[RMDB]
RNA sequence: GGGAACGACUCGAGUAGAGUCGAAAAACUGCAUCUACGGAUGCAGAACUACGUUCAUCCACUUUAUUUGGACGCAUGAAAUGAGAAUAGGGAACGGGAUUCUCAUACGCAGGCUACGGCCUGCGAAAAAACUCCUUAUGCUUCGGCAUAAGGAGAACUUUCUUGAUACGUUCGCGUAUCAAGAAAGAAAAGAAACAACAACAACAAC
Reactivity to 2A3 in 0.01 (KOAc 150mM, MgCl2 10mM, bicine 150mM(pH8.5), 24C), signal-to-noise 2, nucleotides 027 to 156: a040c000u000g000c000a010u000c000u030a030c190g120g000a000u000g000c000a000g000a000a000c020u080a020c010g000u000u010c010a030u010c000c020a070c090u170u260u180a160u110u110u140g020g000a010c000g060c070a050u160g130a110a130a020u030g010a020g000a010a020u030a020g060g000g000a020a020c000g030g000g010a010u020u000c000u000c010a030u020a020c000g000c000a000g000g000c000u040a080c240g100g000c030c000u010g000c010g000a010a000a000a000a000a000c000u000c000c000u000u000a000u000g000c000u000u050c140g110g020c000a000u000a000a000g000g000a000g000a000a000
Reactivity to DMS in 0.01 (KOAc 150mM, MgCl2 10mM, bicine 150mM(pH8.5), 24C), signal-to-noise 1, nucleotides 027 to 156: a140c010u000g000c040a000u000c000u000a090c190g060g020a040u000g020c010a000g000a020a100c030u000a010c000g000u000u000c030a040u000c070c160a210c290u000u020u000a140u050u000u020g010g010a020c010g010c040a040u010g030a050a090a110u000g000a060g000a060a130u010a140g030g000g000a010a050c070g000g000g030a300u000u000c040u040c010a070u000a090c040g040c000a070g000g000c030u010a050c300g090g040c010c000u010g000c020g000a010a060a030a050a020a050c000u000c000c000u000u000a020u000g030c000u000u000c300g000g020c000a030u000a000a010g000g000a010g040a000a000